[RMDB]
RNA sequence: GGGAACGACUCGAGUAGAGUCGAAAAAUUGCUGCGGAUACAGCGCUUGUUGGACUAUUAUUAGAGAUUACAGUGUUCAACGCCGAUGGUGAGAAGCAUGCCUCUCGAAUUGCAAAAAGUGAGGUUGGUGGCGCACUGAGAGAUGUCCCAUUAUCCGCACAUAGUGACUGUUCGCAGUCACUAUGUGAAAAGAAACAACAACAACAAC
Reactivity to 2A3 in 0.01 (KOAc 150mM, MgCl2 10mM, bicine 150mM(pH8.5), 24C), signal-to-noise 5, nucleotides 027 to 156: a010u090u120g000c010u020g000c000g020g010a000u020a060c010a020g010c010g040c090u060u160g030u020u030g010g000a020c020u040a070u210u030a100u130u130a170g040a030g020a130u110u160a080c050a090g050u010g010u080u040c010a040a020c030g000c050c040g080a110u160g040g050u070g030a080g020a050a030g040c030a020u060g000c000c000u020c000u010c010g110a140a120u160u140g060c080a070a060a020a050a010g050u060g010a020g000g040u020u080g020g050u050g010g000c030g020c020a010c020u040g040a030g010a010g020a100u080g040u060c000c010c010a010u050u050a020u030c000c010g000
Reactivity to DMS in 0.01 (KOAc 150mM, MgCl2 10mM, bicine 150mM(pH8.5), 24C), signal-to-noise 2, nucleotides 027 to 156: a090u010u010g010c010u000g030c030g010g020a100u000a090c070a060g020c030g030c120u000u010g030u000u010g000g020a090c030u010a100u000u000a120u010u010a160g010a160g010a130u000u000a140c070a080g030u020g000u010u000c010a040a050c060g020c030c010g010a100u010g010g030u000g020a150g010a100a150g010c100a080u000g010c030c020u000c020u010c020g010a060a120u000u000g000c120a090a060a060a100a120g010u010g010a040g040g030u010u010g000g010u000g000g020c050g030c030a080c050u000g000a160g020a120g010a120u010g000u000c030c010c000a200u000u000a110u000c010c040g000